[RMDB]
RNA sequence: GGGAACGACUCGAGUAGAGUCGAAAAGAGAUGUUGAGGCUUGUAUGGUUCAGGUUACCUGCGGUAGCAUGACUCUUAAUGGUCUUUGGCUUGACAACACAGUCUGGUGCCCACGACACGUAAUGUGGACUAAGAUAGUCUUCGGACUAUCUUAGUCAAAAGAAACAACAACAACAAC
Reactivity to DMS in 0.01 (KOAc 150mM, MgCl2 10mM, bicine 150mM(pH8.5), 24C), signal-to-noise 6, nucleotides 027 to 126: g000a090g010a060u000g010u000u000g010a080g010g000c040u000u000g020u000a060u020g010g020u000u000c050a040g010g010u000u000a050c040c020u010g020c180g010g010u000a040g010c040a040u000g000a070c030u010c070u000u000a070a120u000g010g000u000c020u000u000u010g010g000c050u000u000g000a100c080a050a090c100a070c130a070g000u010c030u010g000g000u000g010c020c010c010a090c140g000a200c050a030c070g010u000a060a090u010g010u000g000
Reactivity to 2A3 in 0.01 (KOAc 150mM, MgCl2 10mM, bicine 150mM(pH8.5), 24C), signal-to-noise 5, nucleotides 027 to 126: g050a000g010a030u090g030u110u060g030a000g040g010c030u090u070g040u090a090u130g060g020u050u040c030a020g030g030u040u060a040c000c020u070g080c060g050g030u030a020g000c030a040u040g010a030c000u020c010u080u090a090a030u140g010g000u020c000u030u030u040g030g000c030u020u070g020a020c030a100a010c040a020c000a060g030u010c020u030g020g020u030g030c020c000c010a030c040g040a010c000a000c020g040u080a130a100u190g030u060g090